[RMDB]
RNA sequence: GGGAACGACUCGAGUAGAGUCGAAAACAGCUCUAGAAAUACUGGUUAAUUAGAAGUGGCAGCCUUACUUAUUAUCUCAGUAUGUCAGGUUUCAAGGAACCAGCCUGCAGGACACACUUCAAUUGCAUAUGCUGUAGAAGUUCGCUUCUACAGCAUAAAAAGAAACAACAACAACAAC
Reactivity to DMS in 0.01 (KOAc 150mM, MgCl2 10mM, bicine 150mM(pH8.5), 24C), signal-to-noise 3, nucleotides 027 to 126: c100a100g010c050u010c090u000a150g000a080a090a040u000a040c010u000g010g010u000u000a030a060u000u000a060g000a020a030g000u000g010g000c070a070g000c100c000u000u000a070c030u000u000a030u000u000a040u010c040u010c050a020g010u000a000u000g000u000c060a080g010g010u000u010u010c080a100a110g010g010a060a070c030c020a070g000c030c010u010g020c050a090g000g000a060c130a110c090a070c040u000u010c030a050a070u000u010g030c160a140
Reactivity to 2A3 in 0.01 (KOAc 150mM, MgCl2 10mM, bicine 150mM(pH8.5), 24C), signal-to-noise 2, nucleotides 027 to 126: c000a010g070c020u080c070u200a080g080a100a160a050u080a030c010u000g040g000u070u080a050a040u060u050a060g000a040a020g000u060g050g120c000a030g050c010c010u000u080a070c000u000u040a040u110u030a130u080c100u030c070a050g000u040a030u050g060u040c020a000g060g000u050u080u050c130a160a060g120g000a050a020c030c000a020g030c000c020u020g000c040a010g080g000a040c010a000c020a030c070u090u130c040a060a140u140u040g020c010a040
Chemical mapping of a 177-nucleotide RNA with DMS and 2A3. Conditions: 150 mM KOAc, 10 mM MgCl2 and 150 mM bicine (pH 8.5), 24 C. For 2A3, 1,056 sequencing reads were counted. Values cover nucleotides 27 to 126.